The record gives the reactivity of an RNA of 177 nucleotides to 2A3 and DMS. The reactions ran in a buffer of 150 mM KOAc, 10 mM MgCl2 and 150 mM bicine (pH 8.5), at 24 C. For DMS, 14,014 sequencing reads were counted. For DMS the reverse transcriptase was MarathonRT.
RNA sequence: GGGAACGACUCGAGUAGAGUCGAAAAGGCCUGGAUACAUCUUCGGGCAUCUUGAGUGGAAAAGGCAGUUUCAUGCGUCUGGAGAACAGCCAUUGGAGCAAUUCCAACAGAGGGUAUGAGUAUGGCCUCUAACACGAGUAUUCGUACUCGUGUUAGAAAAAGAAACAACAACAACAAC
Reactivity to 2A3 in 0.01 (KOAc 150mM, MgCl2 10mM, bicine 150mM(pH8.5), 24C), signal-to-noise 3, nucleotides 027 to 126: g040g000c010c000u010g020g040a050u120a160c060a150u070c030u020u040c020g000g020g000c030a030u020c030u080u110g070a080g040u110g070g040a040a070a060a080g070g000c020a040g010u040u060u080c030a040u060g020c040g120u030c030u020g000g030a110g030a140a060c020a020g030c010c030a070u040u110g040g000a100g000c060a080a130u160u000c020c010a040a020c010a030g070a030g080g070g010u060a040u100g020a010g040u090a050u120g040g000c000c010
Reactivity to DMS in 0.01 (KOAc 150mM, MgCl2 10mM, bicine 150mM(pH8.5), 24C), signal-to-noise 9, nucleotides 027 to 126: g020g010c010c010u010g010g010a060u010a100c180a130u010c090u000u000c040g010g010g010c030a040u000c050u010u000g000a110g020u010g000g000a080a060a100a070g000g020c050a100g010u000u000u010c040a030u000g010c060g010u000c010u000g000g010a160g010a050a090c150a110g000c030c040a270u010u000g010g000a060g010c120a070a140u010u000c020c020a040a090c100a060g010a050g000g010g010u000a020u000g000a080g010u010a070u010g000g010c030c040
Values cover nucleotides 27 to 126.